Source: RMDB library 15KLIB, as collected in RNAgym.
The record gives the reactivity of an RNA of 170 nucleotides to DMS and 2A3.
For 2A3 the reverse transcriptase was SuperScript II with manganese.
The reactions ran in a buffer of 150 mM KOAc, 10 mM MgCl2 and 150 mM bicine (pH 8.5), at 24 C.
The DMS profile rests on 17,849 reads.

RNA sequence: GGGAACGACUCGAGUAGAGUCGAAAAUUAAGCUUAGAGCACCUAUGGGUGUCUAUGACUUUAAGGUCUCAACACAAGAGUUCAGAUUCAUGACUGCUAACAAUCUAACUGCACCUAGAAAUUCUUGCCGGACACGUGUUCGCACGUGUCAAAAGAAACAACAACAACAAC
Reactivity to DMS in 0.01 (KOAc 150mM, MgCl2 10mM, bicine 150mM(pH8.5), 24C), signal-to-noise 5, nucleotides 027 to 129: u010u020a000a050g020c010u000u020a030g020a030g000c030a040c000c000u020a140u070g050g020g050u000g030u040c030u000a030u010g030a100c000u010u000u010a030a090g040g030u030c040u060c080a030a030c220a100c150a040a020g040a050g000u030u010c010a070g020a130u000u000c060a080u000g020a070c060u040g040c120u040a000a100c020a070a000u090c030u000a070a060c050u030g030c040a070c050c040u000a080g060a020a080a090u000u000c030u000u000g060c050c020g050
Reactivity to 2A3 in 0.01 (KOAc 150mM, MgCl2 10mM, bicine 150mM(pH8.5), 24C), signal-to-noise 8, nucleotides 027 to 129: u030u020a000a000g000c000u010u010a000g010a020g050c000a010c010c020u060a220u300g180g000g000u000g000u000c000u000a020u010g140a260c000u020u040u060a040a010g020g010u000c010u000c010a020a130c050a010c040a090a010g020a000g060u050u040c020a020g020a120u050u050c020a020u140g050a050c020u040g000c010u070a090a010c020a050a020u020c020u070a020a040c020u070g020c020a020c030c010u030a050g080a100a100a020u120u030c050u020u020g040c020c050g070